RNA sequence: GGGAACGACUCGAGUAGAGUCGAAAAGAUGGUUUCGACCAUCCUCAGUCCUAAGUCCUCUCGGGAGGAUAUCUGGAGAGGUAUCGGAAACGAUACUACCCACCUCUGGAUAUCCAUCGAUCGAGAGGAUAUGGAAGCUACGCACGUUCGCGUGCAAUAUACUAACGAGGUUCGCCUCGUUAGUAUAAAAAGAAACAACAACAACAAC
Reactivity to 2A3 in 0.01 (KOAc 150mM, MgCl2 10mM, bicine 150mM(pH8.5), 24C), signal-to-noise 9, nucleotides 027 to 156: g010a010u020g010g050u070u140u300c270g110a060c010c000a010u010c010c040u100c060a090g080u040c000c000u050a120a050g030u000c000c000u000c000u000c000g010g020g000a030g000g000a000u000a000u000c010u020g000g000a000g000a010g010g010u000a010u000c000g000g040a060a040a040c010g000a000u000a010c010u100a150c020c040c030a040c000c010u000c000u000g000g000a000u010a000u010c000c000a190u230c010g050a060u020c000g000a000g000a000g000g000a000u000a000u000g000g000a040a050g070c100u170a060c110g010c010a000c020g040u100u120c210g010c020g090u010g050c000a040a060
Reactivity to DMS in 0.01 (KOAc 150mM, MgCl2 10mM, bicine 150mM(pH8.5), 24C), signal-to-noise 4, nucleotides 027 to 156: g020a000u010g010g010u000u010u010c250g040a090c010c000a030u000c010c030u000c080a170g020u000c000c010u010a090a270g010u000c000c000u000c000u000c010g010g020g020a080g020g020a000u000a000u000c010u000g020g020a020g010a220g020g020u000a020u010c010g010g000a230a140a300c020g010a030u000a010c010u010a040c020c010c030a300c120c010u000c000u020g040g020a020u000a010u000c000c000a120u000c110g000a120u010c000g010a040g040a040g020g020a000u000a030u000g000g000a100a170g010c050u010a110c060g000c000a070c040g010u000u000c210g010c040g000u000g000c010a120a190